Source: RMDB library OK3TST, as collected in RNAgym. Chemical mapping of a 207-nucleotide RNA with 2A3. Conditions: 150 mM KOAc, 10 mM MgCl2 and 150 mM bicine (pH 8.5), 24 C.

[RMDB]
RNA sequence: GGGAACGACUCGAGUAGAGUCGAAAAGAUGAAAUAAAAGGUAUAAAACGUAAUGAAACAGUUGAAGAUUCUGUCAUCUACGAAACCAAACCUUUAACCUCACCUACCAUUUCUGUUUUCGGUAAAAUAGAAGUGGAUGCUACCGGAUUCGUAGCCGGCCUACUCAUACGUUCGCGUAUGAGUAGGCAAAAGAAACAACAACAACAAC
Reactivity to 2A3 in 0.01 (KOAc 150mM, MgCl2 10mM, bicine 150mM(pH8.5), 24C), signal-to-noise 2, nucleotides 027 to 156: g040a040u110g020a090a000a040u180a050a070a030a010g050g000u090a120u070a170a050a060a010c010g000u010a010a030u050g060a010a200a040c030a010g000u110u110g160a210a090g030a280u200u050c000u000g030u000c020a000u000c030u020a000c000g000a130a040a010c030c000a060a010a120c000c000u020u020u010a080a080c010c040u000c020a020c010c010u020a060c000c000a000u000u000u000c000u000g020u000u000u010u100c140g130g090u280a020a040a000a000u010a010g000a000a010g000u000g000g010a040u090g020c030u050a050c010c030g000g170a150u120u120c070g070u080a010g050c040c000g040